[RMDB]
RNA sequence: GGGAACGACUCGAGUAGAGUCGAAAAUUUCAAGAUGUCAAUAGCAGGAGGACUUACUGUAUUUCGAUCGCGGAGAUUGGGAACUCGAUAUUCGGUGAGUUCAGGAUAGUGCCCCUGCUUGUUGAGGCGUCAAUAGAGGGUUCGCCCUCUAUUGACGAAAAGAAACAACAACAACAAC
Reactivity to 2A3 in 0.01 (KOAc 150mM, MgCl2 10mM, bicine 150mM(pH8.5), 24C), signal-to-noise 3, nucleotides 027 to 126: u080u080u050c070a040a030g090a120u190g040u070c010a020a030u010a050g000c020a010g000g030a130g050g010a020c010u030u030a010c000u040g020u120a180u020u130u020c040g020a050u030c080g000c110g300g190a060g010a060u060u060g050g000g080a080a050c060u010c040g060a080u000a130u250u070c050g080g000u100g030a010g000u030u020c000a000g000g060a080u060a170g050u200g300c020c000c000c000u000g000c000u010u040g000u000u010g020a030g050g060
Reactivity to DMS in 0.01 (KOAc 150mM, MgCl2 10mM, bicine 150mM(pH8.5), 24C), signal-to-noise 3, nucleotides 027 to 126: u000u010u010c040a110a150g010a130u010g000u000c020a020a040u000a020g020c020a010g020g000a110g020g000a040c000u000u000a260c000u000g000u010a060u000u000u000c030g010a040u010c080g010c180g020g000a110g020a040u010u010g010g010g010a070a070c080u010c020g000a110u000a100u000u000c130g000g020u000g000a050g020u010u000c010a020g000g000a110u010a030g010u000g010c010c010c010c000u000g020c020u010u010g030u000u000g010a040g010g000

The data come from the RNA Mapping Database (RMDB), library OK2TST. This 177-nucleotide RNA was probed chemically with 2A3 and DMS. High DMS reactivity at an A or C suggests that its Watson-Crick edge is free. For 2A3 the reverse transcriptase was SuperScript II with manganese. Reactivities are given for positions 27 through 126. The RNA was probed in 150 mM KOAc, 10 mM MgCl2 and 150 mM bicine (pH 8.5) at 24 C. Values are in units of 0.01, from 0 to 300, in steps of 10.